[RMDB]
RNA sequence: GGGAACGACUCGAGUAGAGUCGAAAAUAUGGUGCUACAGAACCCGGAAGCCCGCUGCAACACGUACUCAGUGACAUUCAGCGCAAGCUCGUAAGAACGACGUGGUGUACGUAUCAUGGCCGUUUGCCCUUUCCGUACAUUUCGAUGUACGGAAAGGAAAAGAAACAACAACAACAAC
Reactivity to 2A3 in 0.01 (KOAc 150mM, MgCl2 10mM, bicine 150mM(pH8.5), 24C), signal-to-noise 7, nucleotides 027 to 126: u200a110u110g050g000u080g040c010u040a090c020a050g090a120a050c010c020c010g040g020a030a010g020c010c000c000g020c020u020g010c050a080a030c010a020c050g030u130a060c040u090c130a050g020u030g100a050c020a070u050u070c010a060g010c000g000c050a050a030g000c020u030c070g060u090a110a040g030a110a030c040g030a010c020g030u030g020g040u030g020u060a030c040g030u040a020u070c020a030u030g040g020c060c000g020u030u060u070g050c000
Reactivity to DMS in 0.01 (KOAc 150mM, MgCl2 10mM, bicine 150mM(pH8.5), 24C), signal-to-noise 3, nucleotides 027 to 126: u030a050u010g020g000u000g000c050u000a090c110a100g000a090a140c070c010c020g000g000a130a100g010c010c030c000g020c030u020g000c080a070a060c070a010c020g030u000a040c080u020c110a080g020u030g010a110c060a110u000u020c020a070g010c010g020c110a100a100g010c010u000c040g020u020a060a070g000a050a040c040g000a070c070g010u010g000g000u010g010u020a020c140g000u020a030u010c030a050u000g000g010c010c020g020u010u000u000g030c120